This 207-nucleotide RNA was probed chemically with 2A3 and DMS.
Reactivities are given for positions 27 through 156.
Conditions: 150 mM KOAc, 10 mM MgCl2 and 150 mM bicine (pH 8.5), 24 C.
For 2A3 the reverse transcriptase was SuperScript II with manganese.
For DMS, 2,578 sequencing reads were counted.
DMS adducts were read by reverse transcription with MarathonRT.
The data come from the RNA Mapping Database (RMDB), library OK3TST.
[RMDB]
RNA sequence: GGGAACGACUCGAGUAGAGUCGAAAAAAGUCCAUAUGCCCACCUUCGCUGGUCCGGGUGGAUGCUUAUACAUGCUAUGGAUGCCUACAUUUGAAAUAAUGUAGAUGCCUAAUACUCUCUCUCAGGGAGAGAGUUUAGAUGCCUCCAAAGGGUAUGCGUAGCCUUUUACUUUCGAGUAAAAGGCUACAAAAGAAACAACAACAACAAC
Reactivity to 2A3 in 0.01 (KOAc 150mM, MgCl2 10mM, bicine 150mM(pH8.5), 24C), signal-to-noise 2, nucleotides 027 to 156: a020a000g070u000c010c000a010u020a010u160g030c020c010c010a010c000c010u110u110c090g040c150u120g040g050u050c040c010g000g060g000u010g020g010a040u100g010c020u080u090a080u030a120c050a040u110g050c000u030a040u080g010g010a000u010g030c000c000u000a000c000a010u010u050u110g120a100a100a040u140a020a000u030g000u000a020g000a050u110g030c000c000u060a090a040u120a110c000u020c000u000c000u000c000u020c130a130g000g290g000a000g020a000g000a000g000u000u010u000a010g000a000u050g000c000c020u070c070c000a070a130a020g060g010g010u080a050u070g060c020
Reactivity to DMS in 0.01 (KOAc 150mM, MgCl2 10mM, bicine 150mM(pH8.5), 24C), signal-to-noise 1, nucleotides 027 to 156: a030a120g020u000c020c010a080u000a020u000g010c020c000c000a090c030c030u000u040c100g040c050u000g020g000u000c030c070g060g020g040u000g000g030a100u000g010c030u000u010a200u010a140c060a080u000g000c020u010a120u010g010g050a030u010g010c040c000u000a020c000a050u000u000u000g020a160a100a070u000a040a030u010g040u000a030g010a140u000g030c070c020u000a020a080u000a050c020u010c000u000c000u000c010u010c090a280g000g030g020a030g000a020g010a010g010u000u000u000a010g020a100u010g020c020c020u000c020c090a060a090a100g000g010g000u000a050u000g000c160